The record gives the reactivity of an RNA of 177 nucleotides to DMS and 2A3.

[RMDB]
RNA sequence: GGGAACGACUCGAGUAGAGUCGAAAAGAAAGAAAAGAAACUUCCGAUGAAGACCCGUAUUCUACGCCUGUACCACGGGUCGGUUUUCGUACAGGCGAUUUCUUCGAGCGAAAAGAUAAGAAAGAAACCCAUGCAGUAUAUUCGUAUACUGCAUGGGAAAAGAAACAACAACAACAAC
Reactivity to DMS in 0.01 (KOAc 150mM, MgCl2 10mM, bicine 150mM(pH8.5), 24C), signal-to-noise 1, nucleotides 027 to 126: g020a080a090a120g000a070a070a100a060g000a050a030a040c060u010u010c060c020g050a080u030g000a020a110g000a070c000c030c000g070u010a060u030u050c040u000a000c050g010c000c000u000g000u000a010c010c210a100c000g010g000g010u040c080g010g010u030u000u020u010c150g010u000a010c000a000g000g040c000g000a120u000u000u000c000u000u010c060g000a180g000c070g000a120a070a030a080g000a110u010a120a050g000a040a080a040g020a090a170a090
Reactivity to 2A3 in 0.01 (KOAc 150mM, MgCl2 10mM, bicine 150mM(pH8.5), 24C), signal-to-noise 2, nucleotides 027 to 126: g050a000a010a000g050a020a110a000a000g090a030a100a030c060u110u050c030c070g120a110u220g050a070a000g000a030c000c000c000g050u020a080u030u020c030u060a020c020g000c020c010u000g000u040a050c000c000a000c060g000g000g040u010c050g000g010u020u110u060u070c040g000u010a000c030a000g000g040c000g020a010u000u030u000c000u000u000c000g100a100g070c100g050a070a110a000a060g100a170u130a030a140g050a080a040a000g030a050a020a020
Values are in units of 0.01, from 0 to 300, in steps of 10. 2A3 is a SHAPE reagent: it acylates the 2'-hydroxyl of flexible nucleotides of all four kinds. The DMS profile rests on 1,637 reads.